[RMDB]
RNA sequence: GGGAACGACUCGAGUAGAGUCGAAAAAGGAUCCGAGCCACAGUGAUUCGUGUAAGGGCCGCUUGUGCUCGGAUCUUGCGGCAACGCAGAAAAGAUGGAACGGUUGGUCGAGGAGCAGAUAAGCCCCAAAUGGUACUGGAUUCGUCCAGUACCAUUUAAAAGAAACAACAACAACAAC
Reactivity to DMS in 0.01 (KOAc 150mM, MgCl2 10mM, bicine 150mM(pH8.5), 24C), signal-to-noise 7, nucleotides 027 to 126: a040g010g000a000u000c000c000g000a020g010c070c040a040c090a020g010u000g000a060u010u000c010g020u050g030u050a130a190g010g000g000c070c010g000c010u020u020g010u010g000c010u000c000g000g000a000u000c000u010u020g010c030g000g010c160a080a080c070g030c020a090g000a090a090a050a090g010a060u020g010g010a070a080c070g000g010u010u010g000g010u010c030g010a090g010g010a110g010c050a090g010a090u020a090a090g000c020c000c010c110
Reactivity to 2A3 in 0.01 (KOAc 150mM, MgCl2 10mM, bicine 150mM(pH8.5), 24C), signal-to-noise 5, nucleotides 027 to 126: a000g040g000a000u000c000c000g000a000g020c050c000a060c030a020g020u010g020a090u080u100c070g010u150g110u300a190a280g030g010g010c010c000g010c020u050u190g050u120g000c000u000c000g000g000a000u000c000u000u020g000c010g000g000c010a060a020c030g010c040a010g120a030a100a010a010g130a060u150g020g050a040a070c070g020g050u050u080g040g000u030c020g020a050g020g020a050g030c020a010g020a130u090a060a080g010c010c010c000c010